RNA sequence: GGGAACGACUCGAGUAGAGUCGAAAAAGUAACAAUAGUUUGACAUUAAGCCUUUAAAAGUCAAUAAUAUUGAUAACAACGAUAAUGGUAUUUACUCUCAUAUUAAAUUUCUUACUGCUAGGGCUGACUUUUUAAAAGCAUUCGUGCUUUUAAAAAGAAAAGAAACAACAACAACAAC
Reactivity to DMS in 0.01 (KOAc 150mM, MgCl2 10mM, bicine 150mM(pH8.5), 24C), signal-to-noise 2, nucleotides 027 to 126: a130g000u000a030a060c020a020a020u000a020g000u010u000u000g000a010c010a140u000u000a050a040g010c060c060u010u010u000a060a090a110a150g000u000c000a010a010u010a090a060u000a220u000u000g000a090u000a050a030c040a060a110c130g000a060u010a050a070u010g010g010u000a070u010u000u000a060c130u000c050u000c010a040u000a070u010u000a040a070a100u000u000u000c020u010u000a060c080u000g000c050u000a040g000g000g030c020u000g010a170
Reactivity to 2A3 in 0.01 (KOAc 150mM, MgCl2 10mM, bicine 150mM(pH8.5), 24C), signal-to-noise 1, nucleotides 027 to 126: a020g050u050a060a000c000a000a020u060a030g010u000u050u030g010a010c010a010u000u110a110a030g000c040c000u110u160u220a070a190a000a040g010u040c020a000a000u090a080a000u040a000u090u000g040a130u120a170a030c020a010a010c090g060a060u120a180a180u090g000g040u140a070u090u130u030a060c000u000c000u000c090a060u060a130u190u140a080a220a150u000u120u020c020u070u060a030c040u040g080c040u010a040g080g140g000c020u000g030a090

The data come from the RNA Mapping Database (RMDB), library OK2TRN.
This 177-nucleotide RNA was probed chemically with DMS and 2A3.
For DMS, 1,289 sequencing reads were counted.
2A3 is a SHAPE reagent: it acylates the 2'-hydroxyl of flexible nucleotides of all four kinds.
For 2A3, 796 sequencing reads were counted.
For DMS the reverse transcriptase was MarathonRT.
The RNA was probed in 150 mM KOAc, 10 mM MgCl2 and 150 mM bicine (pH 8.5) at 24 C.